[RMDB]
RNA sequence: GGGAACGACUCGAGUAGAGUCGAAAACUAAGGAUCGGCCGCACUCCGGUUAGCAAUGUGGCAGAACUGAACCGUGCCCUAGGAAAUUAUAAGAAGGGAGAUGUCAUCAUGCUCCUGGUGACCAACGGUGGUCACCCGUAUUCGUACGGGUGACCACAAAAGAAACAACAACAACAAC
Reactivity to 2A3 in 0.01 (KOAc 150mM, MgCl2 10mM, bicine 150mM(pH8.5), 24C), signal-to-noise 3, nucleotides 027 to 126: c010u030a110a080g070g010a080u040c060g060g000c000c020g030c050a050c050u030c020c030g150g020u090u090a020g060c050a110a100u050g020u040g140g000c000a030g050a040a090c050u130g030a020a020c080c000g010u090g000c020c000c000u070a060g000g110a000a070a060u300u210a220u170a130a130g130a080a070g000g010g010a120g010a020u110g120u060c000a040u010c000a010u150g100c010u000c000c020u030g000g020u050g000a000c020c030a110a030c070g080
Reactivity to DMS in 0.01 (KOAc 150mM, MgCl2 10mM, bicine 150mM(pH8.5), 24C), signal-to-noise 2, nucleotides 027 to 126: c150u000a120a110g000g000a000u000c050g000g010c070c050g000c050a050c190u020c140c060g000g000u050u000a050g060c140a160a020u040g000u000g010g000c000a100g010a070a090c020u020g000a130a050c020c020g020u000g000c010c000c000u010a030g020g030a080a080a170u010u040a030u010a000a100g000a080a120g030g000g000a000g000a160u020g020u010c030a100u000c070a050u000g000c010u010c040c050u000g000g010u020g000a060c030c130a020a070c120g010